[RMDB]
RNA sequence: GGGAACGACUCGAGUAGAGUCGAAAAUGGAAAAAACGUCUCUCGCGCCUGAUGAAUUAUCCGGGCACGCGUUACACUAAACAGAUGAUGGAGACGGUCUGUUACCCGGCAAUGGAAGAAGUGGCGCCUUAAUAUGGGAGUUCGCUCCCAUAUUAAGAAAAGAAACAACAACAACAAC
Reactivity to DMS in 0.01 (KOAc 150mM, MgCl2 10mM, bicine 150mM(pH8.5), 24C), signal-to-noise 7, nucleotides 027 to 126: u010g010g000a000a060a070a060a080a080c020g020u000c000u000c000u000c180g010c030g010c000c000u010g000a100u010g010a110a080u010u000a050u010c020c010g010g010g030c140a060c140g020c150g010u000u000a080c130a110c130u010a090a040a030c030a030g010a020u000g000a100u010g000g000a020g020a020c010g000g000u000c010u010g000u000u000a150c010c000c010g000g000c130a060a030u000g000g010a090a120g000a120a130g020u000g000g010c010g010c020
Reactivity to 2A3 in 0.01 (KOAc 150mM, MgCl2 10mM, bicine 150mM(pH8.5), 24C), signal-to-noise 5, nucleotides 027 to 126: u090g010g020a100a090a020a010a030a040c000g010u000c000u000c010u030c060g010c010g020c010c020u100g050a140u110g060a110a160u120u030a080u290c010c000g000g010g000c090a030c070g100c020g060u070u110a060c080a020c050u150a080a090a000c010a000g020a020u070g010a060u110g050g000a010g000a000c000g000g000u010c000u010g020u000u050a050c000c010c000g000g020c030a050a020u040g010g050a060a060g030a090a010g130u050g040g010c010g000c000